RNA sequence: GGGAACGACUCGAGUAGAGUCGAAAAGGGUUAGCGUUCGCGCUAACCCCAGGAUCGAUCAUGUCAAAUCUCGCAGACAUGAAACGAUCAAAAGCGAGAAAACUAGACAGUCAUUCGUGACUGUCAAUUAGUUAAUGGCAUUCGUGCCAUUAACUAAAAAAGAAACAACAACAACAAC
Reactivity to 2A3 in 0.01 (KOAc 150mM, MgCl2 10mM, bicine 150mM(pH8.5), 24C), signal-to-noise 3, nucleotides 027 to 126: g000g000g000u010u000a020g000c020g000u050u040c280g000c000g030c110u010a000a000c000c010c000c010a050g070g110a040u040c010g000a010u010c010a000u020g000u000c020a010a080a300u050c060u020c050g070c030a020g000a020c020a020u010g000a050a060a020c030g000a010u100c020a080a080a030a020g010c020g010a040g080a050a120a030a060c100u090a090g010a000c000a010g010u000c010a020u080u100c200g080u030g000a000c000u000g000u000c000a000a010
Reactivity to DMS in 0.01 (KOAc 150mM, MgCl2 10mM, bicine 150mM(pH8.5), 24C), signal-to-noise 3, nucleotides 027 to 126: g010g000g000u000u000a000g020c000g050u000u020c220g050c010g030c000u000a000a010c000c010c000c030a020g000g000a070u000c010g010a200u000c020a000u000g000u000c000a060a120a090u010c050u000c050g040c040a230g000a010c000a010u000g000a000a070a090c050g020a050u010c150a030a050a060a070g020c050g000a050g000a090a130a070a070c200u010a090g000a020c000a030g000u000c000a020u000u010c200g000u000g000a000c000u000g000u000c000a030a050